[RMDB]
RNA sequence: GGGAACGACUCGAGUAGAGUCGAAAAAUACAAGGGGAGGUUUCGGCCAAAUGUUGUAUGCAGAAAGCGUGAGGAAGGUAGCACUUAGACACUCACGAGUAGCGGUUCGGAAGUAGUGCUAAAAUGAGACAGUACGAAAAGUUCGCUUUUCGUACAAGAAGUGAUAACAGUUCGCUGUUAUCACUUCAAAAGAAACAACAACAACAAC
Reactivity to DMS in 0.01 (KOAc 150mM, MgCl2 10mM, bicine 150mM(pH8.5), 24C), signal-to-noise 3, nucleotides 027 to 156: a110u020a030c060a040a070g020g000g020g020a090g020g030u020u000u010c040g050g020c010c020a050a080a080u000g010u000u000g030u000a050u000g030c040a130g000a050a040a090g010c050g000u000g010a060g030g010a070a060g030g010u000a090g010c020a080c050u000u000a080g000a070c030a090c010u010c000a030c050g000a110g010u000a060g010c050g010g000u000u000c030g000g010a070a120g010u000a040g000u000g000c020u000a000a040a080a100u000g000a150g020a110c050a100g020u000a020c000g000a000a010a010a020g010u000u010c300g030c010u000u000u000u010c000g030u010a000c010a030a090
Reactivity to 2A3 in 0.01 (KOAc 150mM, MgCl2 10mM, bicine 150mM(pH8.5), 24C), signal-to-noise 5, nucleotides 027 to 156: a000u160a030c040a050a070g020g010g020g030a030g010g050u040u050u080c040g030g000c050c020a040a080a040u070g010u050u020g020u070a070u070g050c010a010g070a080a070a000g050c030g010u030g000a010g030g020a070a030g040g010u050a020g020c010a000c050u060u070a040g030a080c030a020c100u010c010a030c030g020a010g020u050a030g040c070g020g030u060u070c030g010g010a070a000g030u120a000g010u010g030c020u030a010a040a020a080u130g010a050g020a050c060a060g000u010a010c000g010a000a000a000a000g020u020u060c070g020c040u010u000u000u000c000g000u000a000c000a000a010
The record gives the reactivity of an RNA of 207 nucleotides to DMS and 2A3. 2A3 is a SHAPE reagent: it acylates the 2'-hydroxyl of flexible nucleotides of all four kinds. For 2A3 the reverse transcriptase was SuperScript II with manganese. Source: RMDB library M2RFPK, as collected in RNAgym. The RNA was probed in 150 mM KOAc, 10 mM MgCl2 and 150 mM bicine (pH 8.5) at 24 C. DMS (dimethyl sulfate) methylates the pairing face of unpaired adenines and cytosines.